[RMDB]
RNA sequence: GGGAACGACUCGAGUAGAGUCGAAAAUGUGUCUCCUUCGGGAGACACAAACGCUCGCAGCCCGAGGCCGCACGGGGAAGGCAGCGGCCAGCCAGCGAGCUAUGUGUUAUCAAUUCGUUGAUAACAAAGGUUAAUAAGUCUUCGGACUUAUUAACCUAAAAGAAACAACAACAACAAC
Reactivity to 2A3 in 0.01 (KOAc 150mM, MgCl2 10mM, bicine 150mM(pH8.5), 24C), signal-to-noise 3, nucleotides 027 to 126: u070g000u010g000u010c010u010c010c000u030u070c170g080g010g000a000g000a000c000a000c000a000a000a000c010g010c010u000c000g010c010a010g020c000c010c000g030a030g010g000c000c000g040c020a060c100g100g020g080g100a060a050g130g000c090a030g000c020g000g010c000c010a010g020c020c000a000g000c000g010a000g010c000u040a110u110g130u000g000u000u000a000u010c010a020a020u070u060c190g050u090u020g000a010u010a010a000c000a030a130
Reactivity to DMS in 0.01 (KOAc 150mM, MgCl2 10mM, bicine 150mM(pH8.5), 24C), signal-to-noise 2, nucleotides 027 to 126: u000g030u010g010u000c020u010c000c000u000u000c240g040g020g010a010g000a000c000a000c010a000a040a060c230g000c000u000c000g010c010a200g000c020c030c020g000a070g000g010c000c020g020c020a100c130g010g000g010g010a140a140g020g000c090a110g020c020g000g010c000c000a030g010c020c120a210g000c000g010a020g030c010u000a020u000g000u000g000u000u000a000u030c000a010a040u000u020c110g010u000u000g020a020u000a000a000c000a060a080